[RMDB]
RNA sequence: GGGAACGACUCGAGUAGAGUCGAAAACCCCGCACAGGAGGGUGGACCGGGGACCCGGCACUCUCUGCCCUGACUGUUCCGGCUCCCCCAGACCGGCCCACGGGACCGCACACCCGACGGCCGGUGGUCUAGGCUAAGCCUUCGGGCUUAGCCUAGAAAAAGAAACAACAACAACAAC
Reactivity to DMS in 0.01 (KOAc 150mM, MgCl2 10mM, bicine 150mM(pH8.5), 24C), signal-to-noise 2, nucleotides 027 to 126: c000c020c000c080g020c160a120c110a080g030g000a060g000g010g020u000g010g000a180c070c020g000g000g020g000a090c180c020c020g010g020c030a080c040u040c090u000c010u000g070c060c020c030u000g050a080c000u000g000u000u000c000c010g000g010c070u000c010c000c000c000c010a090g000a040c000c000g000g050c060c000c300a300c060g000g000g000a020c120c030g000c040a040c060a170c000c020c000g020a240c300g000g010c000c000g000g020u010g030g010
Reactivity to 2A3 in 0.01 (KOAc 150mM, MgCl2 10mM, bicine 150mM(pH8.5), 24C), signal-to-noise 1, nucleotides 027 to 126: c000c020c000c010g010c000a130c010a080g090g010a020g000g010g030u030g040g060a080c000c020g000g000g020g140a150c060c000c000g040g000c030a030c000u050c010u000c020u030g000c010c030c010u090g040a080c000u010g070u120u000c010c010g040g000c000u050c000c010c000c020c000a030g060a020c000c000g020g000c000c000c000a070c020g000g000g030a070c020c040g080c010a050c000a030c020c020c000g020a040c010g010g000c000c000g000g000u000g010g000
This 177-nucleotide RNA was probed chemically with DMS and 2A3. The RNA was probed in 150 mM KOAc, 10 mM MgCl2 and 150 mM bicine (pH 8.5) at 24 C.